[RMDB]
RNA sequence: GGGAACGACUCGAGUAGAGUCGAAAAUGAAAGUAGUCUCCUGCAGCGUCUGGGGUAUCCGUUGCAGUCCUCGGAACCAGGACCUCGGCGUGGCCUAGCGAGUUAUGGCGACGAAGGCCGUGAAAAACUACUCAUAGAAGUUCGCUUCUAUGAGUAGAAAAGAAACAACAACAACAAC
Reactivity to 2A3 in 0.01 (KOAc 150mM, MgCl2 10mM, bicine 150mM(pH8.5), 24C), signal-to-noise 3, nucleotides 027 to 126: u150g020a040a030a010g080u140a020g050u050c020u020c020c020u030g020c030a060g010c010g050u050c030u100g050g000g000g020u050a100u020c010c020g030u060u080g020c070a020g060u060c010c010u060c040g050g070a050a060c040c000a020g030g020a000c000c000u020c000g040g010c020g040u030g020g000c020c010u030a040g040c010g040a030g020u100u100a150u190g090g000c010g010a080c050g020a120a020g050g000c000c000g000u090g060a030a070a000a010a020
Reactivity to DMS in 0.01 (KOAc 150mM, MgCl2 10mM, bicine 150mM(pH8.5), 24C), signal-to-noise 5, nucleotides 027 to 126: u020g000a070a090a090g010u010a070g010u000c030u000c020c020u000g010c090a100g000c070g020u000c030u010g010g010g010g010u000a080u000c040c040g000u000u010g010c100a110g010u000c040c030u000c070g000g010a060a070c080c050a150g000g000a050c050c010u000c020g010g010c040g020u000g010g010c010c030u000a120g010c040g000a080g000u000u010a090u010g000g010c030g000a080c060g010a130a090g000g010c010c020g030u020g000a040a040a060a090a120